[RMDB]
RNA sequence: GGGAACGACUCGAGUAGAGUCGAAAAGAUAUGGACAUGUAGCUUUUGACGGAGAAUGGUCGGAAACGACCAUUUCUCCGAUAAGCUGCAUGUCCUAAGUCAAAAUCACUUUGUUCGCAAAGUGAAAGAGUAAAAUAUGCUUCGGCAUAUUUUACUCAAAAGAAACAACAACAACAAC
Reactivity to 2A3 in 0.01 (KOAc 150mM, MgCl2 10mM, bicine 150mM(pH8.5), 24C), signal-to-noise 2, nucleotides 027 to 126: g020a010u050a000u030g010g010a010c000a000u010g020u040a000g000c000u000u160u280u300g300a300c160g000g000a020g020a010a030u010g040g000u020c000g000g000a140a000a000c020g000a000c000c000a000u010u040u020c000u010c000c020g010a010u010a010a000g000c010u000g000c000a000u000g000u000c000c000u000a010a000g000u030c000a010a010a000a290u050c000a000c030u040u000u010g050u120u140c260g000c200a040a010a000g000u030g070a110a110a040
Reactivity to DMS in 0.01 (KOAc 150mM, MgCl2 10mM, bicine 150mM(pH8.5), 24C), signal-to-noise 3, nucleotides 027 to 126: g000a020u000a060u000g000g000a020c000a000u000g010u000a000g020c000u000u000u000u000g030a240c100g010g000a010g010a030a010u000g000g020u010c000g000g000a000a010a030c010g010a010c000c000a000u000u000u010c000u010c010c010g030a010u000a010a010g010c000u010g000c000a010u000g010u000c000c000u000a000a040g000u010c000a130a100a120a190u000c000a000c000u000u000u000g010u000u020c300g030c020a020a010a010g000u000g010a030a070a120
The record gives the reactivity of an RNA of 177 nucleotides to 2A3 and DMS. Conditions: 150 mM KOAc, 10 mM MgCl2 and 150 mM bicine (pH 8.5), 24 C. The DMS profile rests on 5,594 reads. The 2A3 profile rests on 3,689 reads. Reactivities are given for positions 27 through 126. For DMS the reverse transcriptase was MarathonRT.